This 177-nucleotide RNA was probed chemically with DMS and 2A3. Values are in units of 0.01, from 0 to 300, in steps of 10. The DMS profile rests on 15,259 reads. For DMS the reverse transcriptase was MarathonRT. Values cover nucleotides 27 to 126. The RNA was probed in 150 mM KOAc, 10 mM MgCl2 and 150 mM bicine (pH 8.5) at 24 C.
RNA sequence: GGGAACGACUCGAGUAGAGUCGAAAACACUUGGGUUUUAAAUACCCUCAAGAAAUGCGAUGUCUGAGGUUGUAAGGCUGUGAAUAUCCUCAAGUUGAGAUAACAUUUGUGAAUCCCCAACGCCUUCUAUAUAGGUGAAUUUCGAUUCACCUAUAUAAAAAGAAACAACAACAACAAC
Reactivity to DMS in 0.01 (KOAc 150mM, MgCl2 10mM, bicine 150mM(pH8.5), 24C), signal-to-noise 9, nucleotides 027 to 126: c070a090c120u010u000g010g000g020u010u000u000u010a070a140a150u010a050c040c010c010u010c160a070a090g010a040a040a040u000g010c050g000a070u000g010u000c020u000g010a040g010g010u000u000g010u010a050a050g000g010c040u010g010u000g010a120a100u010a080u000c020c010u000c030a050a080g010u000u000g010a090g000a050u000a040a080c020a070u000u000u000g010u000g010a130a160u000c040c000c000c090a070a080c140g010c030c020u000u010c100
Reactivity to 2A3 in 0.01 (KOAc 150mM, MgCl2 10mM, bicine 150mM(pH8.5), 24C), signal-to-noise 2, nucleotides 027 to 126: c050a000c040u040u030g000g020g030u090u050u050u120a090a130a020u130a020c020c060c000u060c020a100a090g040a050a090a010u070g000c060g040a030u050g030u000c030u060g030a030g070g000u040u020g070u130a010a000g020g010c010u020g040u020g100a050a040u090a060u140c030c000u000c010a030a050g080u090u120g110a060g000a060u050a200a050c030a050u040u020u070g030u010g020a030a080u070c010c020c010c010a000a050c020g030c010c000u030u000c020